[RMDB]
RNA sequence: GGGAACGACUCGAGUAGAGUCGAAAAGGCUUGAGGGGCUGGAGGCUCUGUUCACAACAUGGCUCAGAGACAUGCACAGCAGGCCUUACCACGUGGCCCUCUCCACAGUGCUGCUUGAGCGAUCUCCUAACAUGGCGACUAGCUUCCCUCAGGCAAGGUUUCCCUUUCCUUUCGAGGAAAGGGAAACAAAAGAAACAACAACAACAAC
Reactivity to 2A3 in 0.01 (KOAc 150mM, MgCl2 10mM, bicine 150mM(pH8.5), 24C), signal-to-noise 1, nucleotides 027 to 156: g060g000c000u010u010g000a010g010g000g010g000c010u000g000g030a030g040g040c000u000c060u070g040u010u050c090a080c060a290a090c030a210u210g060g000c040u040c040a010g000a010g110a250c020a010u180g000c010a030c020a080g060c010a000g040g010c000c020u040u090a130c030c060a080c170g000u040g040g000c000c040c040u080c010u000c010c000a140c050a050g000u030g000c000u010g010c000u000u020g000a020g020c020g050a040u060c030u050c030c040u050a090a000c000a050u110g000g010c070g050a010c060u040a020g000c000u180u090c070c000c000u000c000a010g000g020c000a020a030g100
Structure probing data (2A3) for a 207-nucleotide construct. Source: RMDB library OK3TST, as collected in RNAgym. The reactions ran in a buffer of 150 mM KOAc, 10 mM MgCl2 and 150 mM bicine (pH 8.5), at 24 C.